Chemical mapping of a 207-nucleotide RNA with 2A3. It was measured as part of the RMDB library OK3TST. For 2A3 the reverse transcriptase was SuperScript II with manganese.

[RMDB]
RNA sequence: GGGAACGACUCGAGUAGAGUCGAAAAUCGGUUUCACUGACACUUGAUUUCGUUUAUUUGCAAUUUCUCAGAUGAAAUUCAUGCAAAAACAUUGUCAAAAUCUGACAAGUUCUCUAUUGAAAUUCAUUUUGUGCAAUUAAGAUCGAAGAUAGAGUAAGUGACUAUGAGGUUUCGACCUCAUAGUCACAAAAGAAACAACAACAACAAC
Reactivity to 2A3 in 0.01 (KOAc 150mM, MgCl2 10mM, bicine 150mM(pH8.5), 24C), signal-to-noise 3, nucleotides 027 to 156: u100c030g040g020u030u000u040c090a050c060u100g090a080c040a040c080u090u100g030a100u060u120u030c000g040u000u030u000a040u010u030u010g010c040a040a080u100u190u150c120u050c040a050g030a040u020g010a030a000a030u010u000c000a020u050g060c020a000a060a000a090a080c050a160u010u010g000u000c000a020a100a150a300u120c150u010g000a000c000a000a000g010u050u010c050u000c070u190a140u040u010g020a030a050a040u040u020c020a030u010u100u130u160g120u030g020c000a000a030u050u010a030a070g060a150u180c010g010a030a010g050a110u170a010g040a000g050u020a190a010